[RMDB]
RNA sequence: GGGAACGACUCGAGUAGAGUCGAAAACCAACCGCCUUCGGGCGGUUGGGAUGACAGUCGCGAGGAAAGUCCGGGCUGACUGUCCACGACAGAACGCGGCUUAAAUCUAUCGCUUCGGCGAUAGAAAAGUUAUACUGUACUUCGGUACAGUAUAACUAAAAGAAACAACAACAACAAC
Reactivity to DMS in 0.01 (KOAc 150mM, MgCl2 10mM, bicine 150mM(pH8.5), 24C), signal-to-noise 7, nucleotides 027 to 126: c000c000a010a010c000c000g020c000c000u000u010c190g030g010g030c010g020g010u000u000g000g000g000a070u010g000a120c180a020g010u000c010g020c000g010a110g010g000a140a160a090g000u000c000c110g010g000g000c010u000g010a090c220u000g010u000c000c010a050c170g000a030c020a040g000a160a210c020g010c010g000g000c010u000u000a040a100a120u000c000u000a000u000c000g000c010u000u010c220g020g010c000g010a000u000a000g000a010a050a070
Reactivity to 2A3 in 0.01 (KOAc 150mM, MgCl2 10mM, bicine 150mM(pH8.5), 24C), signal-to-noise 5, nucleotides 027 to 126: c000c000a010a000c000c010g050c010c030u090u110c280g130g010g000c000g010g000u000u000g010g010g010a050u120g070a000c020a020g010u010c000g010c010g030a070g030g130a230a070a030g010u000c020c050g000g000g020c050u090g100a190c110u090g020u010c000c010a080c080g050a010c010a010g080a130a010c010g000c000g020g000c000u040u110a040a120a030u010c000u010a000u000c000g000c000u040u060c210g130g000c000g000a000u000a000g000a010a070a000
This 177-nucleotide RNA was probed chemically with DMS and 2A3. The DMS profile rests on 9,534 reads. Reactivities are given for positions 27 through 126. The data come from the RNA Mapping Database (RMDB), library M2PK50. Conditions: 150 mM KOAc, 10 mM MgCl2 and 150 mM bicine (pH 8.5), 24 C.